RNA sequence: GGGAACGACUCGAGUAGAGUCGAAAACGAUGAGGGGGCUUCGCCGCCUACCGAUUCGAACCGAACUCCGAAUGCCCGAGGGUCUAGAGCGCGGCAGUCAGAACAUGUGGGCUAAGCUGUGUGUUCGUCAGCUGGAUGAAUUCGUUCAUCCAGCUGAAAAAGAAACAACAACAACAAC
Reactivity to DMS in 0.01 (KOAc 150mM, MgCl2 10mM, bicine 150mM(pH8.5), 24C), signal-to-noise 3, nucleotides 027 to 126: c020g000a010u010g000a300g000g000g010g000g000c000u000u020c280g000c240c200g000c030c030u040a030c000c000g000a300u000u030c030g000a170a170c140c090g020a090a080c090u000c060c100g000a060a090u040g030c050c000c030g010a100g000g000g000u010c050u030a010g020a020g000c030g000c000g030g000c010a050g010u000c060a050g000a090a070c080a100u010g020u020g020g000g010c020u000a030a070g010c020u000g000u000g000u000g000u000u000c060g000
Reactivity to 2A3 in 0.01 (KOAc 150mM, MgCl2 10mM, bicine 150mM(pH8.5), 24C), signal-to-noise 3, nucleotides 027 to 126: c010g000a020u030g000a030g000g010g010g000g000c020u070u040c080g050c090c020g010c030c010u220a300c030c000g010a000u010u020c000g000a020a000c040c000g050a070a040c030u020c020c010g090a140a090u130g060c000c000c000g000a110g020g000g010u020c020u050a070g000a010g040c000g010c010g020g000c010a000g020u050c020a030g050a090a020c010a010u120g030u070g050g000g010c040u030a050a060g000c000u040g020u000g030u000g030u090u020c010g020
Record summary:
This 177-nucleotide RNA was probed chemically with DMS and 2A3. 2A3 adducts were read by reverse transcription with SuperScript II with manganese. As a SHAPE reagent, 2A3 marks flexible, mostly unpaired nucleotides at the ribose 2'-OH. Reactivities are given for positions 27 through 126. The RNA was probed in 150 mM KOAc, 10 mM MgCl2 and 150 mM bicine (pH 8.5) at 24 C.